RNA sequence: GGGAACGACUCGAGUAGAGUCGAAAAGAUAUGGAAACACGGACUUUUGACGAAGGAAGAAGAGCGUAUCUCGGAAACGAGAUACGCUCUUCUUCGACCUUCGAUAAGUCCAGUGUUUCCUAAGUCAGUACAAGCAAUAGUUCGCUAUUGCUUGUACAAAAGAAACAACAACAACAAC
Reactivity to DMS in 0.01 (KOAc 150mM, MgCl2 10mM, bicine 150mM(pH8.5), 24C), signal-to-noise 2, nucleotides 027 to 126: g010a030u010a300u020g010g010a000a000a010c000a000c010g010g000a010c000u000u000u010u010g020a240c230g000a030a020g000g010a100a080g000a020a010g010a020g040c000g010u000a000u000c010u010c010g020g000a070a080a220c020g000a000g000a020u000a000c000g000c000u000c000u000u000c010u000u000c150g010a170c300c000u010u000c000g010a210u000a010a000g020u000c010c000a030g040u000g010u000u000u010c000c000u000a000a060g000u010c070a160